The record gives the reactivity of an RNA of 207 nucleotides to 2A3 and DMS. It was measured as part of the RMDB library M2RFOK. The RNA was probed in 150 mM KOAc, 10 mM MgCl2 and 150 mM bicine (pH 8.5) at 24 C. DMS (dimethyl sulfate) methylates the pairing face of unpaired adenines and cytosines. For DMS the reverse transcriptase was MarathonRT.
RNA sequence: GGGAACGACUCGAGUAGAGUCGAAAAAUCCUCAGGUUCAUAAGCGUGAUGAUUGGGUGUUCAUGCUCCAUGCAUGACAUGUGCCUCCUUUGAACCUUGGUACGACCUUGGCACAUUACCCAUCUGAAAAAGACGUUCGCGUUCGCGCGAACGUCAACAUCUGUCCUUACUUCGGUAAGGACAGAUGAAAAGAAACAACAACAACAAC
Reactivity to 2A3 in 0.01 (KOAc 150mM, MgCl2 10mM, bicine 150mM(pH8.5), 24C), signal-to-noise 4, nucleotides 027 to 156: a010u040c000c010u010c020a000g020g010u000u000c010a030u080a200a040g060c110g110u100g140a080u060g010a030u110u200g000g010g010u050g010u070u040c000a010u000g000c010u090c190c060a150u300g000c000a000u000g010a020c020a020u000g000u000g000c000c000u020c000c000u030u000u040g000a000a000c000c000u020u030g060g020u100a070c090g070a140c100c060u060u090g000g000c000a000c000a020u020u130a030c000c010c000a000u000c020u040g050a120a100a000a070a040g000a000c000g000u000u010c000g000c000g020u050u050c180g000c000g000c020g170a000a000c000g000u000c000a000a000
Reactivity to DMS in 0.01 (KOAc 150mM, MgCl2 10mM, bicine 150mM(pH8.5), 24C), signal-to-noise 2, nucleotides 027 to 156: a140u000c010c030u010c040a060g020g010u010u000c020a080u010a020a120g010c110g000u020g020a150u000g010a080u000u000g060g020g020u000g000u000u000c010a000u000g010c010u000c250c200a130u020g000c000a020u030g000a030c300a130u010g010u000g030c010c000u030c150c040u000u000u020g020a000a020c000c000u000u000g050g020u000a040c120g050a060c020c060u000u000g000g070c020a010c000a080u000u000a060c010c020c000a060u000c020u000g020a120a090a000a160a170g030a020c010g000u000u000c030g050c000g030u000u000c300g000c020g050c000g000a010a000c010g030u020c000a010a060